This 177-nucleotide RNA was probed chemically with 2A3 and DMS. For DMS the reverse transcriptase was MarathonRT. It was measured as part of the RMDB library M2PK50.

RNA sequence: GGGAACGACUCGAGUAGAGUCGAAAAGCCUUUACGUUCGCGUAAAGGCAAAGGAGGCUCGAGUCUGUGUGUGCGUAACGAGGCUCCACGCACACACAGACAAAACCCUGCUGUUCGCAGCAGGGAAUCGUAGAUGAGAGUUCGCUCUCAUCUACGAAAAAGAAACAACAACAACAAC
Reactivity to 2A3 in 0.01 (KOAc 150mM, MgCl2 10mM, bicine 150mM(pH8.5), 24C), signal-to-noise 4, nucleotides 027 to 126: g000c000c000u000u010u000a010c020g010u020u070c260g000c000g110u000a000a000a000g000g010c010a030a000a010g030g000a040g050g020c020u020c090g070a020g010u000c000u010g000u000g000u000g000u000g000c020g020u040a070a070c080g030a100g110g000c030u030c030c030a000c000g000c010a000c000a000c000a000c000a000g000a000c000a000a030a010a020c000c000c000u010g000c000u000g030u030u040c270g000c090a000g000c000a000g000g000g010a010a030
Reactivity to DMS in 0.01 (KOAc 150mM, MgCl2 10mM, bicine 150mM(pH8.5), 24C), signal-to-noise 4, nucleotides 027 to 126: g010c000c000u000u000u010a000c000g010u000u020c230g030c000g020u000a000a010a010g000g010c000a000a010a060g000g000a140g010g010c020u000c050g000a060g010u000c000u000g000u000g000u000g020u000g000c000g010u010a100a090c130g000a070g010g010c040u000c080c090a040c000g000c000a000c000a010c000a000c010a000g010a030c110a040a060a100a150c000c000c000u000g000c000u000g010u000u010c210g030c000a010g000c010a020g010g000g000a010a010

The reactions ran in a buffer of 150 mM KOAc, 10 mM MgCl2 and 150 mM bicine (pH 8.5), at 24 C.